The record gives the reactivity of an RNA of 207 nucleotides to 2A3. Values cover nucleotides 27 to 156. Conditions: 150 mM KOAc, 10 mM MgCl2 and 150 mM bicine (pH 8.5), 24 C.

[RMDB]
RNA sequence: GGGAACGACUCGAGUAGAGUCGAAAAGGCAAAAGCAUGAGAUACACAACUACGACAAAGAACGAUGGGUGUGCAAGGUGUGAGGCACCCGUAGCCUUACGGUCCCCGCGGUCAUACCCGUGGGUAUGGGAGACGACGACGCCGACCUUUGUGGCGCUACCGAGGGACUGUUCGCAGUCCCUCGGUAAAAAGAAACAACAACAACAAC
Reactivity to 2A3 in 0.01 (KOAc 150mM, MgCl2 10mM, bicine 150mM(pH8.5), 24C), signal-to-noise 1, nucleotides 027 to 156: g020g000c000a010a000a010a000g000c010a080u200g000a000g000a100u120a080c090a010c000a100a080c050u100a000c080g150a010c130a090a110a000g050a290a000c050g050a110u050g060g010g000u130g040u010g100c080a070a060g080g000u080g090u130g040a000g050g030c000a040c010c010c000g020u030a030g010c040c000u000u060a030c000g040g050u020c020c000c000c030g000c010g020g000u070c100a010u200a160c000c000c080g000u050g000g000g000u010a060u080g000g000g000a030g000a030c030g000a020c010g010a000c010g040c000c000g030a220c000c070u070u050u100g050u040g000g000c050g000c000
Overview:
The data come from the RNA Mapping Database (RMDB), library OK3TST.